[RMDB]
Description: An RNA of 177 nucleotides, treated with 2A3 and DMS and read out base by base. 2A3 adducts were read by reverse transcription with SuperScript II with manganese. For DMS the reverse transcriptase was MarathonRT. The data come from the RNA Mapping Database (RMDB), library OK1LIB. Conditions: 150 mM KOAc, 10 mM MgCl2 and 150 mM bicine (pH 8.5), 24 C. DMS (dimethyl sulfate) methylates the pairing face of unpaired adenines and cytosines.

RNA sequence: GGGAACGACUCGAGUAGAGUCGAAAACAUUCAGCGCCUUUAGAGAUCACCGGUGAAACUGAUGAGCUGACGCACCGCGAUGCCAUCGGCGAGGUGGUCCAUCGCCUCGUUGAUAUCGUCCAACCGACUGCAUCGCCUAAUUCGUUAGGCGAUGCAGAAAAGAAACAACAACAACAAC
Reactivity to 2A3 in 0.01 (KOAc 150mM, MgCl2 10mM, bicine 150mM(pH8.5), 24C), signal-to-noise 3, nucleotides 027 to 126: c020a020u140u100c030a020g020c000g020c020c050u090u080u110a080g030a040g000a100u050c000a000c030c040g080g040u060g030a130a060a030c040u080g040a090u070g020a100g020c020u020g050a050c020g000c010a120c080c080g000c050g000a020u080g010c040c030a030u000c000g000g000c000g000a030g000g000u050g010g040u050c020c030a060u090c000g020c010c000u030c000g000u000u000g020a020u060a050u040c030g030u020c020c000a040a030c050c020g040a040
Reactivity to DMS in 0.01 (KOAc 150mM, MgCl2 10mM, bicine 150mM(pH8.5), 24C), signal-to-noise 1, nucleotides 027 to 126: c070a220u060u040c000a110g000c060g000c130c030u010u010u040a030g000a080g000a140u000c000a110c080c000g000g000u000g000a130a050a130c100u000g020a080u000g000a060g000c010u000g000a050c300g000c030a030c040c210g000c090g000a100u000g040c030c080a000u030c010g010g000c010g000a000g000g010u000g020g000u040c150c080a030u000c000g000c030c000u010c000g000u000u070g000a000u020a010u000c070g010u000c040c010a070a110c020c000g010a180
The 2A3 profile rests on 2,140 reads.